[RMDB]
RNA sequence: GGGAACGACUCGAGUAGAGUCGAAAACUUGAUUAUCAUAAGUCUGGUUUGGCAGAGCUUCAAAAGGAAUAUAAAGCCCAAAACGAGGCAUCUGAUACCUACAUCAAGCGUUUAAAGGCAGAGGGCAAGGAAGACGAAGCUAGACAGGAACAGCUCACUUAUAUUUACCAUUCGUGGUAAAUAUAAGAAAAGAAACAACAACAACAAC
Reactivity to DMS in 0.01 (KOAc 150mM, MgCl2 10mM, bicine 150mM(pH8.5), 24C), signal-to-noise 2, nucleotides 027 to 156: c000u020u010g020a150u000u000a160u000c080a120u000a100a140g010u020c030u010g000g000u030u000u000g030g000c030a090g000a130g030c020u000u010c040a070a090a080a140g010g030a090a060u000a090u000a040a070a110g000c000c010c010a110a070a070a150c070g040a030g020g060c000a080u000c040u000g010a140u010a050c100c030u000a070c100a080u010c050a020a070g020c050g030u010u000u000a050a090a180g020g000c020a080g020a200g030g010g030c050a060a120g000g010a040a070g020a110c070g010a080a120g020c030u010a130g010a130c060a050g010g010a030a070c020a050g010c110u010c000a160
Reactivity to 2A3 in 0.01 (KOAc 150mM, MgCl2 10mM, bicine 150mM(pH8.5), 24C), signal-to-noise 4, nucleotides 027 to 156: c020u040u080g040a000u050u180a080u200c060a030u080a300a040g040u020c040u060g050g010u030u060u050g080g000c040a020g000a020g060c010u020u000c010a080a090a080a070g120g050a110a020u180a010u130a210a100a020g030c010c010c000a050a080a000a010c050g020a010g010g010c030a090u040c020u020g020a040u060a120c000c040u070a060c020a090u030c060a080a040g040c010g060u030u110u220a080a120a030g060g000c030a030g030a030g080g000g010c020a020a020g030g000a010a020g010a010c050g010a020a010g010c010u010a030g040a060c030a040g080g010a040a050c010a040g000c030u020c020a050

The record gives the reactivity of an RNA of 207 nucleotides to DMS and 2A3. The DMS profile rests on 2,323 reads. The 2A3 profile rests on 1,867 reads. High DMS reactivity at an A or C suggests that its Watson-Crick edge is free. Conditions: 150 mM KOAc, 10 mM MgCl2 and 150 mM bicine (pH 8.5), 24 C.